[RMDB]
RNA sequence: GGGAACGACUCGAGUAGAGUCGAAAAUACGCGAGGUUCGCCUCGCGUAAAAGAGGAGCGUAAUCGUGAGCGUACGUAGUGCUGUACAUCGUUCCUACACGAAUGCACAUGGUUUCGACCAUGUGAAAGUGUACCUCCGGUUCGCCGGAGGUACACUAAAAGAAACAACAACAACAAC
Reactivity to 2A3 in 0.01 (KOAc 150mM, MgCl2 10mM, bicine 150mM(pH8.5), 24C), signal-to-noise 2, nucleotides 027 to 126: u050a000c010g000c000g010a000g030g010u020u120c140g060c040c000u010c000g000c000g010u000a000a000a000a000g130a020g030g000a010g030c020g070u170a050a080u160c070g040u050g070a080g030c050g030u040a020c060g060u100a050g090u060g050c070u060g030u150a010c000a040u020c000g010u020u030c030c000u010a030c060a000c050g150a120a070u200g060c000a020c000a000u000g060g000u000u090u160c170g100a020c000c000a000u000g000u020g030a040a040
Reactivity to DMS in 0.01 (KOAc 150mM, MgCl2 10mM, bicine 150mM(pH8.5), 24C), signal-to-noise 1, nucleotides 027 to 126: u000a020c010g010c000g010a070g020g010u000u000c240g030c020c010u000c000g040c000g020u000a000a040a070a110g010a110g000g000a060g020c000g020u000a090a050u000c090g000u010g000a050g040c060g010u000a020c170g000u000a060g010u000g000c040u000g000u000a110c080a170u000c000g010u000u010c000c000u000a070c180a040c160g010a040a070u000g000c010a010c040a000u000g000g000u000u000u000c240g000a020c000c000a000u000g030u000g000a010a060